[RMDB]
RNA sequence: GGGAACGACUCGAGUAGAGUCGAAAAGGGCCCCCCCAUAAGAUGGCGAGAUCUCCACUCAUUGGGUCCUUCGUCCAUCUCCUUUUCUUACCUUUGGCCGGCAUGGUCCCAGCCUCCUCGUCGGCGCGCACAUAACACUUCGGUGUUAUGAAAAGAAACAACAACAACAAC
Reactivity to 2A3 in 0.01 (KOAc 150mM, MgCl2 10mM, bicine 150mM(pH8.5), 24C), signal-to-noise 9, nucleotides 027 to 129: g030g010g010c010c000c000c000c000c000c000a080u080a130a030g030a020u030g010g010c020g010a020g000a050u030c170u080c100c020a080c070u230c070a180u120u250g010g000g000u050c030c040u050u040c020g060u040c020c000a010u010c030u100c020c000u090u110u100u070c050u080u140a170c020c010u120u070u120g070g000c010c010g010g000c020a060u150g030g010u030c010c000c000a030g030c000c000u050c000c010u040c060g020u000c000g010g020c030g010c030g020c030a060
Reactivity to DMS in 0.01 (KOAc 150mM, MgCl2 10mM, bicine 150mM(pH8.5), 24C), signal-to-noise 9, nucleotides 027 to 129: g000g000g000c000c020c000c020c010c000c020a050u050a050a030g000a000u000g010g000c020g010a040g010a060u040c090u030c020c010a100c250u060c170a140u040u050g030g010g020u030c090c070u020u010c040g030u040c030c010a020u000c030u000c100c010u030u010u030u010c050u040u050a090c100c020u030u030u030g020g020c040c030g010g020c060a050u030g000g000u020c020c000c030a080g010c020c020u030c000c020u010c030g010u000c020g020g040c050g030c090g040c120a200